This 177-nucleotide RNA was probed chemically with DMS and 2A3. For DMS the reverse transcriptase was MarathonRT. The DMS profile rests on 11,529 reads.
RNA sequence: GGGAACGACUCGAGUAGAGUCGAAAAGGUGUGUAUCGCACGGCUCGAUCAGUGGGAGUAGGCUCAGGUCGAUUGCUCUAUUGGUUUGGUCUGUGUCCUAGUUGCGCGCUGAGAGUAAAACCAAUGGCUAAAUAUUUUUAUUCGUAAAAAUAUUUAGAAAAGAAACAACAACAACAAC
Reactivity to DMS in 0.01 (KOAc 150mM, MgCl2 10mM, bicine 150mM(pH8.5), 24C), signal-to-noise 4, nucleotides 027 to 126: g020g010u000g020u000g000u030a070u030c080g000c020a050c050g010g020c020u000c020g010a100u010c020a030g020u000g010g010g010a050g000u010a030g000g000c010u000c030a030g000g000u010c010g000a030u020u030g000c070u040c250u030a110u040u010g010g010u010u000u000g010g000u010c010u020g000u000g000u030c020c010u000a020g010u020u000g020c060g000c030g010c010u010g010a060g000a050g000u010a050a050a070a130c020c020a060a070u030g000g000
Reactivity to 2A3 in 0.01 (KOAc 150mM, MgCl2 10mM, bicine 150mM(pH8.5), 24C), signal-to-noise 5, nucleotides 027 to 126: g070g000u030g000u020g030u100a150u270c110g020c010a010c000g040g000c010u010c010g090a170u010c010a020g020u020g020g040g000a030g060u030a000g010g010c000u000c010a000g010g020u010c010g020a050u020u140g020c010u020c020u070a120u060u210g050g000u020u010u060g010g000u000c000u010g020u000g040u050c000c000u030a040g030u030u070g100c110g000c000g000c010u000g010a010g000a000g010u070a010a070a000a020c000c010a020a060u080g060g000
Reactivities are given for positions 27 through 126. It was measured as part of the RMDB library OK1LIB. For 2A3 the reverse transcriptase was SuperScript II with manganese.